[RMDB]
RNA sequence: GGGAACGACUCGAGUAGAGUCGAAAACAACAGGGAGGAUGGUGGUGGACGAGCCACUCGCCAACCGGGUCAGGUCCGGAAGGAAGCAGCCCUAACGAGCCAGGCACGGGUCGCCGUGCCAGUACAACAGAAUGUGCCAGUUCGCUGGCACAUUCUGAAAAGAAACAACAACAACAAC
Reactivity to DMS in 0.01 (KOAc 150mM, MgCl2 10mM, bicine 150mM(pH8.5), 24C), signal-to-noise 1, nucleotides 027 to 126: c020a150a220c110a070g010g000g000a060g000g000a080u010g000g010u030g000g030u000g020g010a080c080g020a130g030c040c010a100c030u000c160g020c010c020a030a280c050c020g000g000g000u010c070a210g010g020u000c000c000g030g010a080a200g000g000a110a000g000c070a100g000c000c000c010u000a070a160c170g030a080g000c120c060a150g000g020c010a020c080g000g000g000u010c210g000c010c010g000u000g000c000c000a060g000u000a160c180a100a110